RNA sequence: GGGAACGACUCGAGUAGAGUCGAAAAGGGCUCCCCCCAUAAGAUGACGAGGACCCCACUCAUCGGGGUCCGCAGUCUCAUCCUUUCUUACCUGAUGGCCGGCAUGGUCCCAGCCUCCUCGCUGGCGAACGCCAGUUGUUCGCAACUGGCAAAAGAAACAACAACAACAAC
Reactivity to 2A3 in 0.01 (KOAc 150mM, MgCl2 10mM, bicine 150mM(pH8.5), 24C), signal-to-noise 8, nucleotides 027 to 129: g040g030g010c040u070c000c000c000c000c000c010a050u090a130a070g060a080u210g010a010c030g010a060g010g000a010c000c000c020c020a050c080u270c060a180u250c140g000g000g000g000u000c000c000g000c000a000g030u000c010u000c020a060u050c010c020u080u150u100c040u100u120a130c030c020u060g090a130u120g100g010c010c010g020g000c040a060u120g020g020u040c020c000c000a020g020c000c010u040c000c000u030c040g010c010u010g010g010c030g020a050a000c040
Reactivity to DMS in 0.01 (KOAc 150mM, MgCl2 10mM, bicine 150mM(pH8.5), 24C), signal-to-noise 9, nucleotides 027 to 129: g000g010g020c040u000c020c010c020c000c000c050a100u020a080a100g010a060u070g030a060c040g000a250g000g020a000c000c030c010c000a150c190u070c200a120u060c100g010g010g010g020u010c030c020g020c140a170g000u000c030u000c000a120u040c070c070u030u040u040c050u050u020a070c110c040u010g000a120u030g020g040c050c050g000g000c060a100u040g000g020u050c000c050c040a130g030c030c000u030c010c010u000c030g010c030u040g030g000c000g020a060a110c130